[RMDB]
Description: This 207-nucleotide RNA was probed chemically with 2A3 and DMS. As a SHAPE reagent, 2A3 marks flexible, mostly unpaired nucleotides at the ribose 2'-OH. The DMS profile rests on 1,602 reads. For 2A3 the reverse transcriptase was SuperScript II with manganese. The reactions ran in a buffer of 150 mM KOAc, 10 mM MgCl2 and 150 mM bicine (pH 8.5), at 24 C. The 2A3 profile rests on 422 reads. DMS adducts were read by reverse transcription with MarathonRT.
RNA sequence: GGGAACGACUCGAGUAGAGUCGAAAACCCAGUUCCGGGACCGUUCACUGGAUCCGAAGCCUCUAGAAGGAUAAUAUAGGCACUCCAUACCCUACUCCGACUCAAUACGUCCCCGUCGUACAGAAUGCAAGGGCAUCCCUGUUCGCAGGGAUGCCAAUCCAGAGUAAUACUUCGGUAUUACUCUGGAAAAAGAAACAACAACAACAAC
Reactivity to 2A3 in 0.01 (KOAc 150mM, MgCl2 10mM, bicine 150mM(pH8.5), 24C), signal-to-noise 1, nucleotides 027 to 156: c000c000c020a020g080u160u000c070c050g030g110g050a040c010c040g040u090u040c070a020c130u120g040g000a090u040c030c050g010a070a030g050c020c010u130c040u020a060g130a090a030g110g050a080u120a270a060u170a120u090a100g040g000c000a000c090u040c040c060a070u110a200c010c000c050u080a070c040u080c020c050g050a010c020u020c060a000a040u160a090c050g020u000c010c000c000c010g060u010c000g010u080a120c040a080g110a090a060u100g040c050a070a080g040g000g050c000a000u000c020c020c000u000g000u030u050c160g000c090a000g000g000g030a010u000g020c000c000a000a000
Reactivity to DMS in 0.01 (KOAc 150mM, MgCl2 10mM, bicine 150mM(pH8.5), 24C), signal-to-noise 1, nucleotides 027 to 156: c000c050c020a200g050u000u000c040c020g080g040g000a070c020c010g010u000u000c080a060c090u000g010g000a100u000c010c060g000a140a200g020c050c030u010c040u010a090g010a150a110g030g020a160u000a080a080u000a130u000a130g040g020c010a090c070u000c010c010a070u020a140c050c020c040u000a080c000u000c060c030g030a090c030u000c020a090a140u000a090c030g000u000c000c000c000c040g020u000c070g010u010a200c070a070g000a100a160u000g020c040a110a240g050g050g020c010a010u000c010c010c050u000g030u000u000c240g060c030a040g000g030g030a040u000g000c000c000a010a040